RNA sequence: GGGAACGACUCGAGUAGAGUCGAAAACAAUUUGACGCAAAAACUCCUUGGACAGUUCAGCUCAAAUGUCUAUCUCAUUGAUCCCCAUGACUUGAUCAAGUACGACAAGCGGAUAAUGAGACUUACCUCAUAUGACCAAGAUAUGGAUUAUGGUUUACCAUAAUUACGGCUUCGGCCGUAAUUAUGGAAAAGAAACAACAACAACAAC
Reactivity to 2A3 in 0.01 (KOAc 150mM, MgCl2 10mM, bicine 150mM(pH8.5), 24C), signal-to-noise 5, nucleotides 027 to 156: c050a050a050u020u030u050g030a030c080g000c030a020a050a000a080a080c040u100c070c080u150u170g070g070a040c040a050g000u020u040c040a000g000c000u000c020a010a030a030u060g030u000c030u080a070u020c000u010c010a030u000u090g170a070u040c030c000c030c020a110u130g050a170c030u040u030g050a100u140c070a150a150g120u110a130c080g010a010c010a010a020g000c020g040g000a010u020a050a000u020g010a000g010a020c020u090u110a080c000c000u050c030a010u060a030u140g100a100c050c020a040a040g070a150u110a090u110g070g040a080u100u120a060u210g070g010u120u110u160a040
Reactivity to DMS in 0.01 (KOAc 150mM, MgCl2 10mM, bicine 150mM(pH8.5), 24C), signal-to-noise 2, nucleotides 027 to 156: c070a110a140u000u020u000g010a050c080g060c020a020a160a100a030a060c040u000c050c080u000u020g060g010a070c060a030g050u000u000c000a300g060c010u000c030a030a000a020u000g010u000c120u000a090u000c040u000c010a090u000u000g020a060u000c020c000c090c020a080u000g000a140c000u000u020g000a120u000c050a060a180g030u000a140c050g020a130c030a050a060g040c080g020g000a080u000a040a020u020g000a080g000a060c070u000u000a060c030c020u000c050a070u010a120u000g030a140c000c000a070a040g020a110u000a010u000g020g030a080u010u000a000u000g020g010u000u000u000a110
The data come from the RNA Mapping Database (RMDB), library OK3TST. An RNA of 207 nucleotides, treated with 2A3 and DMS and read out base by base. For 2A3 the reverse transcriptase was SuperScript II with manganese. For DMS, 2,509 sequencing reads were counted. The reactions ran in a buffer of 150 mM KOAc, 10 mM MgCl2 and 150 mM bicine (pH 8.5), at 24 C.